[RMDB]
RNA sequence: GGGAACGACUCGAGUAGAGUCGAAAACCCGAGCCCGGCCUGAUCUGGAUGCUCGCCGGCACCAGCCGCAUGUGGGAACGCCGCUCCGGCGACAAGGACUUCUGCCACGCCCGCAUCGGGCUCGGCACGACGUGAUUUAUUUCGAUAAAUCACGUCGAAAAGAAACAACAACAACAAC
Reactivity to 2A3 in 0.01 (KOAc 150mM, MgCl2 10mM, bicine 150mM(pH8.5), 24C), signal-to-noise 3, nucleotides 027 to 126: c020c000c000g010a020g010c020c010c040g050g010c060c050u080g040a120u060c010u040g090g070a210u060g030c020u050c060g070c050c020g030g000c000a030c010c040a020g050c010c030g060c070a050u060g040u060g040g010g060a150a070c070g030c070c020g010c040u060c050c050g010g000c010g020a020c050a060a040g050g010a070c050u160u030c070u210g030c010c000a020c070g030c000c010c030g010c000a040u090c020g000g000g000c020u020c020g000g000c000a040
Reactivity to DMS in 0.01 (KOAc 150mM, MgCl2 10mM, bicine 150mM(pH8.5), 24C), signal-to-noise 3, nucleotides 027 to 126: c060c010c000g030a080g010c050c020c010g000g000c070c040u000g020a070u000c050u010g000g000a110u000g010c070u000c050g010c110c050g020g000c110a050c040c050a030g000c150c060g020c170a040u010g000u000g010g000g010a120a140c140g030c020c060g020c130u000c110c020g010g020c010g010a050c120a070a140g000g020a090c090u000u000c070u000g020c010c010a090c160g010c050c010c020g000c130a070u030c020g000g010g000c010u000c170g000g000c090a130
The record gives the reactivity of an RNA of 177 nucleotides to 2A3 and DMS. It was measured as part of the RMDB library OK2TST. The reactions ran in a buffer of 150 mM KOAc, 10 mM MgCl2 and 150 mM bicine (pH 8.5), at 24 C. For 2A3 the reverse transcriptase was SuperScript II with manganese. For DMS, 2,238 sequencing reads were counted. For 2A3, 3,952 sequencing reads were counted. High DMS reactivity at an A or C suggests that its Watson-Crick edge is free.